[RMDB]
RNA sequence: GGGAACGACUCGAGUAGAGUCGAAAACAGGUGCGUGUUCCACGGCGACAGGCUCGCGCCGCACGUGAUCCACAGGCCGUGCGCGGCCGACGUGUCGACGUUGUGAUACUUGACGAGCUUGAGCGCAGACGAUAGGCGUGUUCGCACGCCUAUCGUCAAAAGAAACAACAACAACAAC
Reactivity to DMS in 0.01 (KOAc 150mM, MgCl2 10mM, bicine 150mM(pH8.5), 24C), signal-to-noise 1, nucleotides 027 to 126: c120a120g030g060u030g000c040g000u000g040u010u000c030c030a030c120g020g000c000g030a060c050a030g000g000c070u000c010g000c160g080c100c020g000c010a010c000g000u000g020a070u000c100c110a130c170a250g020g000c030c000g050u010g050c120g020c010g020g010c000c010g010a020c070g010u000g000u000c030g030a000c040g010u000u000g000u010g010a080u000a150c170u010u000g000a230c030g000a110g000c010u000u000g000a080g030c010g040c020a160
Reactivity to 2A3 in 0.01 (KOAc 150mM, MgCl2 10mM, bicine 150mM(pH8.5), 24C), signal-to-noise 1, nucleotides 027 to 126: c010a010g090g030u100g030c060g010u070g080u060u000c020c020a060c090g090g000c020g000a020c000a010g040g000c020u030c020g070c030g070c020c000g040c000a000c020g010u030g020a170u180c080c030a040c020a060g040g000c020c040g000u020g030c200g000c000g000g000c010c000g030a070c110g000u000g060u020c030g010a030c000g120u130u110g070u040g060a140u230a210c080u160u210g100a240c020g000a020g040c000u130u000g040a050g000c020g000c020a000
The record gives the reactivity of an RNA of 177 nucleotides to DMS and 2A3. Source: RMDB library OK2TRN, as collected in RNAgym. For 2A3 the reverse transcriptase was SuperScript II with manganese. Reactivities are given for positions 27 through 126. For DMS, 895 sequencing reads were counted.